[RMDB]
RNA sequence: GGGAACGACUCGAGUAGAGUCGAAAAUGAAAGAGUUUCCAUUAACCUAUGGAGUAAUAGCGAUCAAGAAUACAACGUCCCAUCUUGGUUGACUUAAUUAUUCCAUAGGUUGGUGGAAGCUAAAAAACAAGGAUAACAAGUUCGCUUGUUAUCCUUGAAAAGAAACAACAACAACAAC
Reactivity to DMS in 0.01 (KOAc 150mM, MgCl2 10mM, bicine 150mM(pH8.5), 24C), signal-to-noise 4, nucleotides 027 to 126: u010g010a110a120a110g000a020g010u000u000u000c000c000a000u000u010a000a000c000c000u000a010u000g000g000a010g010u010a010a000u010a030g000c000g010a000u000c000a010a010g010a060a080u000a110c210a090a270c140g000u000c020c030c040a240u000c000u000u000g000g020u000u000g010a150c020u000u020a030a020u000u000a000u000u000c000c000a000u000a010g000g000u000u000g010g020u000g000g000a010a000g010c000u010a000a010a060a080a030a070
Reactivity to 2A3 in 0.01 (KOAc 150mM, MgCl2 10mM, bicine 150mM(pH8.5), 24C), signal-to-noise 3, nucleotides 027 to 126: u180g010a010a080a080g170a020g000u000u000u000c000c000a010u000u010a010a000c000c010u000a000u000g000g000a000g020u010a000a020u020a060g020c010g010a000u010c000a000a000g040a110a040u230a240c120a190a080c240g100u060c020c020c000a010u010c000u010u000g000g010u020u020g060a100c000u010u050a040a020u020u010a010u010u000c000c000a000u000a010g040g010u000u000g000g010u010g010g000a000a000g000c000u020a020a050a010a030a000a010